Conditions: 150 mM KOAc, 10 mM MgCl2 and 150 mM bicine (pH 8.5), 24 C.
Structure probing data (2A3 and DMS) for a 177-nucleotide construct.
For DMS the reverse transcriptase was MarathonRT.
RNA sequence: GGGAACGACUCGAGUAGAGUCGAAAAAGUCGCGGCGCAUCGGCGAACUCGCGAAGCGCCUCGCGCUCGCGCUCGACAUGAGCGAGCUGCAAGCGCAGGAUCUGUAUUUCGCCGGCCUCCUGCACGACGCAGGUAAUUAUUUCGAUAAUUACCUGCGAAAAGAAACAACAACAACAAC
Reactivity to 2A3 in 0.01 (KOAc 150mM, MgCl2 10mM, bicine 150mM(pH8.5), 24C), signal-to-noise 4, nucleotides 027 to 126: a000g090u040c040g010c030g030g050c030g000c050a080u080c050g040g000c010g010a030a030c010u010c090g040c050g110a060a020g100c070g050c080c000u020c070g020c000g000c010u000c010g000c000g000c000u010c000g120a110c100a250u300g050a180g110c020g000a010g000c040u200g020c080a020a010g000c000g000c010a000g020g020a030u040c030u080g100u120a130u030u040u010c000g000c000c000g000g020c000c010u030c010c010u080g000c050a020c080g140a020
Reactivity to DMS in 0.01 (KOAc 150mM, MgCl2 10mM, bicine 150mM(pH8.5), 24C), signal-to-noise 3, nucleotides 027 to 126: a080g010u000c030g010c030g000g010c270g010c150a070u000c020g010g010c010g000a040a040c100u000c110g010c060g000a070a090g010c120g010c000c000u000c160g010c000g020c000u000c020g000c000g010c010u000c020g000a050c060a120u000g010a150g020c000g000a010g010c000u030g060c000a030a030g010c010g000c000a030g000g000a040u010c050u000g010u000a110u000u000u000c010g010c000c010g010g000c140c040u000c020c010u000g020c060a090c080g010a170